[RMDB]
Structure probing data (2A3 and DMS) for a 177-nucleotide construct.
The RNA was probed in 150 mM KOAc, 10 mM MgCl2 and 150 mM bicine (pH 8.5) at 24 C.
2A3 is a SHAPE reagent: it acylates the 2'-hydroxyl of flexible nucleotides of all four kinds.
The data come from the RNA Mapping Database (RMDB), libraries RFM100 and RFMREP.

RNA sequence: GGGAACGACUCGAGUAGAGUCGAAAAAUCUGGUCGCACCGCUGCCCCACAAGGGCACCGACAGGCGCAUCACAGAUAUCACCGAAUGACUUCGGAGUGAUCUGGCGCAGUUUCCCGGCUGAAUUCCCGUAACUUAAAACUUCGGUUUUAAGUUACGAAAAGAAACAACAACAACAAC
Reactivity to 2A3 in 0.01 (KOAc 150mM, MgCl2 10mM, bicine 150mM(pH8.5), 24C), signal-to-noise 9, nucleotides 027 to 126: a000u040c040u050g050g020u060c010g010c030a070c050c030g020c060u020g010c000c000c010c000a110c020a050a060g000g000g000c010a010c010c010g040a030c040a080g100g000c000g000c020a050u130c050a020c000a030g010a010u020a020u040c010a010c000c000g010a030a040u210g140a180c150u020u000c010g010g010a030g010u030g020a040u000c000u020g030g000c030g000c010a000g000u010u070u040c010c010c000g020g000c040u050g040a080a090u080u030c020c010
Reactivity to DMS in 0.01 (KOAc 150mM, MgCl2 10mM, bicine 150mM(pH8.5), 24C), signal-to-noise 7, nucleotides 027 to 126: a050u020c030u010g020g010u010c020g030c090a090c110c040g020c220u010g010c010c000c010c020a110c300a160a300g010g000g000c010a010c090c010g010a100c170a070g000g010c010g010c040a110u020c120a300c010a020g000a020u000a060u000c010a040c010c000g000a010a040u010g020a150c230u000u000c000g000g000a020g000u000g000a010u000c010u000g000g000c040g020c010a090g000u000u010u000c040c050c010g010g000c030u010g000a060a100u010u000c030c050
For DMS the reverse transcriptase was MarathonRT. DMS (dimethyl sulfate) methylates the pairing face of unpaired adenines and cytosines.